[RMDB]
RNA sequence: GGGAACGACUCGAGUAGAGUCGAAAAAGAUGAUCACUACGGUGAUCAUCAUAUUGUGAUGAGAGAAUAUAUCUGAACGGUGAAGAAGUGGAGCGACUCUGAGGACGAGGCCUUACGAGGCCUCGAACUAGUCAUCAAUUUUCGAAUUGAUGACUAGAAAAGAAACAACAACAACAAC
Reactivity to DMS in 0.01 (KOAc 150mM, MgCl2 10mM, bicine 150mM(pH8.5), 24C), signal-to-noise 9, nucleotides 027 to 126: a080g000a010u000g010a000u000c010a000c000u000a110c200g040g010u000g000a000u000c000a000u000c000a030u020a020u010u010g010u000g010a110u010g000a090g000a080g010a090a070u020a100u020a090u010c030u010g010a090a080c090g000g000u000g010a080a060g000a060a070g010u010g000g000a060g010c050g000a060c040u000c040u010g010a080g000g000a160c020g000a010g000g000c000c000u000u010a080c170g020a050g000g000c000c000u000c010g010a010a090
Reactivity to 2A3 in 0.01 (KOAc 150mM, MgCl2 10mM, bicine 150mM(pH8.5), 24C), signal-to-noise 9, nucleotides 027 to 126: a000g000a000u000g000a000u000c000a000c010u040a030c270g070g000u000g000a000u000c000a000u000c000a000u030a050u070u110g060u040g040a090u070g010a030g010a010g050a130a020u150a030u020a030u150c040u040g030a070a020c040g050g010u060g040a060a070g030a060a010g070u060g040g020a020g030c010g020a030c010u010c040u080g060a050g040g040a020c010g000a000g010g010c000c000u050u020a080c230g040a010g000g000c000c000u000c000g000a000a010
Overview
The record gives the reactivity of an RNA of 177 nucleotides to DMS and 2A3. Conditions: 150 mM KOAc, 10 mM MgCl2 and 150 mM bicine (pH 8.5), 24 C. 2A3 adducts were read by reverse transcription with SuperScript II with manganese.